RNA sequence: GGGAACGACUCGAGUAGAGUCGAAAACAAAAACGGAUUGUGUCUGUAAUCACAACAAACAAAAACAAAUGGAUUGUGUCCCUAAUCACAAAAACAAAACAAAAUGGAUUGUGUCCGUAAUCACAAACGGAGUGAUAUGGUUCGCCAUAUCACUCCGAAAAGAAACAACAACAACAAC
Reactivity to DMS in 0.01 (KOAc 150mM, MgCl2 10mM, bicine 150mM(pH8.5), 24C), signal-to-noise 2, nucleotides 027 to 126: c040a070a070a030a170a030c070g000g000a090u090u060g000u000g000u000c110u000g000u020a050a100u050c040a010c030a020a000c130a140a000a020c210a000a000a120a120a090c150a070a040a110u000g020g000a050u000u000g080u000g040u000c040c000c000u000a000a100u050c070a030c140a000a030a030a060a150c120a030a030a130a000c200a000a040a170a030u010g010g020a150u000u000g000u030g000u010c000c020g000u000a000a020u000c140a020c170a000a000a210
Reactivity to 2A3 in 0.01 (KOAc 150mM, MgCl2 10mM, bicine 150mM(pH8.5), 24C), signal-to-noise 3, nucleotides 027 to 126: c020a000a110a040a000a030c020g020g040a090u010u100g010u020g060u060c070u120g160u210a030a060u070c030a020c020a080a030c050a030a130a060c080a030a110a010a030a000c070a050a120a060u130g030g020a070u070u000g030u020g010u060c030c000c000u090a030a060u010c020a000c020a080a050a080a110a000c030a010a110a020a030c080a010a100a060a070u060g020g020a010u000u030g020u000g050u000c010c030g030u030a020a050u080c040a050c050a110a100a000
Structure probing data (DMS and 2A3) for a 177-nucleotide construct. The RNA was probed in 150 mM KOAc, 10 mM MgCl2 and 150 mM bicine (pH 8.5) at 24 C. For 2A3, 1,911 sequencing reads were counted. It was measured as part of the RMDB library OK1LIB. In probing experiments dimethyl sulfate is read out at A N1 and C N3, which are open when not base-paired. For DMS, 1,601 sequencing reads were counted.